[RMDB]
RNA sequence: GGGAACGACUCGAGUAGAGUCGAAAAACGAAAACUACGCACUCGCAGCUUAAUAACCUGCGCUGAGCCCUUCUCCCCCAGCUUGCCUGUGUCCUAGGGAAUUGGAAGGUCAUCCUUCGCAGGAUCGUCUAGGUAAUCCCUUUCGAGGGAUUACCAAGCUAAAUACAGUAUUCGUACUGUAUUUAGCAAAAGAAACAACAACAACAAC
Reactivity to DMS in 0.01 (KOAc 150mM, MgCl2 10mM, bicine 150mM(pH8.5), 24C), signal-to-noise 3, nucleotides 027 to 156: a100c050g010a080a050a070a060c040u000a050c050g000c050a110c060u000c010g040c030a050g010c030u010u000a120a130u010a170a140c190c010u010g010c040g030c170u010g020a050g020c060c020c060u000u000c040u000c060c010c010c020c050a110g020c070u020u010g030c040c030u000g040u000g020u000c050c030u000a110g010g040g010a070a110u000u000g030g000a090a070g000g020u010c060a100u000c040c020u000u020c080g010c110a110g000g000a060u010c040g020u010c060u020a100g010g010u010a010a010u000c000c000c000u000u000u010c300g010a070g010g000g010a020u000u000a000c000c000a010a090
Reactivity to 2A3 in 0.01 (KOAc 150mM, MgCl2 10mM, bicine 150mM(pH8.5), 24C), signal-to-noise 5, nucleotides 027 to 156: a000c070g020a040a020a020a020c110u190a030c040g020c050a060c060u040c050g040c020a040g010c020u070u070a080a050u070a100a140c010c010u000g030c010g020c090u050g000a020g020c000c010c000u070u020c120u110c010c000c000c000c000a010g000c030u090u160g020c000c020u030g010u020g010u110c010c050u030a040g000g000g070a040a050u130u070g060g010a030a010g020g020u070c030a050u060c020c020u020u060c020g000c030a000g010g010a040u060c020g060u050c130u080a050g000g000u000a000a000u000c000c000c000u000u020u040c090g070a010g000g000g000a000u000u000a000c000c000a000a000
This 207-nucleotide RNA was probed chemically with DMS and 2A3. The RNA was probed in 150 mM KOAc, 10 mM MgCl2 and 150 mM bicine (pH 8.5) at 24 C.